[RMDB]
RNA sequence: GGGAACGACUCGAGUAGAGUCGAAAAGUCACAACAGGAAGAUUUAUGCUACUCUCCUAUACAGAUACACCUAUCAGAAGAAACAUUGACAAGUUUUUUUUCUAGAUUUCAUGUGUUAGUCCUACUUUAUUGGCAUCCUUUUCACACAAGUGACAUACUCCCCUCAUAUCUUCGGAUAUGAGGGGAGAAAAGAAACAACAACAACAAC
Reactivity to 2A3 in 0.01 (KOAc 150mM, MgCl2 10mM, bicine 150mM(pH8.5), 24C), signal-to-noise 2, nucleotides 027 to 156: g010u020c000a000c030a070a090c020a100g060g030a020a060g020a030u080u080u130a120u150g040c010u050a030c000u020c010u010c080c000u030a030u060a110c060a040g090a050u030a010c000a010c030c020u020a060u080c000a000g030a040a000g000a010a080a000c010a030u040u230g090a110c100a090a070g000u020u000u000u000u000u000u020u000c050u060a080g010a060u050u070u160c050a040u150g010u010g060u030u090a040g050u000c040c020u060a040c060u080u280u120a100u150u100g060g000c020a030u030c000c020u040u040u150u170c050a050c010a030c000a140a130g040u040g040a000c000a000u100a080